[RMDB]
RNA sequence: GGGAACGACUCGAGUAGAGUCGAAAAUAUGCCAGCAUAAUAUCGAAUCACGGCACAAUAGCGCUCGUCUGCGUUCUGUCAGGGCCUGUUUUGGUAAUGCCUUUCUUUCUGUUAUGCGCUACGCUGAGUUCGCUACUAUGUUCGCAUAGUAGCGAACAAAAGAAACAACAACAACAAC
Reactivity to DMS in 0.01 (KOAc 150mM, MgCl2 10mM, bicine 150mM(pH8.5), 24C), signal-to-noise 1, nucleotides 027 to 126: u020a070u000g020c010c030a160g000c050a060u000a060a060u010a050u000c100g000a030a030u000c120a080c170g000g000c010a060c040a130a060u000a010g020c050g030c000u010c230g010u000c110u000g010c000g000u030u000c100u000g020u010c060a200g020g000g000c020c030u000g010u000u000u000u000g010g010u010a060a060u000g000c050c020u000u030u000c070u000u000u000c040u000g000u000u000a040u010g030c060g090c160u000a090c100g010c050u000g000a150
Reactivity to 2A3 in 0.01 (KOAc 150mM, MgCl2 10mM, bicine 150mM(pH8.5), 24C), signal-to-noise 2, nucleotides 027 to 126: u300a040u110g060c000c000a000g020c020a020u030a080a000u050a070u100c010g060a060a030u050c040a040c150g010g030c000a000c010a090a070u030a050g010c030g020c050u040c040g210u010c190u080g040c020g040u120u040c030u040g100u060c050a070g030g050g030c000c010u010g080u000u060u040u010g090g010u060a050a030u150g030c040c000u030u100u000c050u010u070u010c010u060g060u090u040a090u070g000c040g000c030u080a060c080g000c040u010g010a010

Structure probing data (DMS and 2A3) for a 177-nucleotide construct. Source: RMDB library RFMREP, as collected in RNAgym. 2A3 is a SHAPE reagent: it acylates the 2'-hydroxyl of flexible nucleotides of all four kinds. For DMS, 903 sequencing reads were counted. The reactions ran in a buffer of 150 mM KOAc, 10 mM MgCl2 and 150 mM bicine (pH 8.5), at 24 C. For 2A3, 1,101 sequencing reads were counted.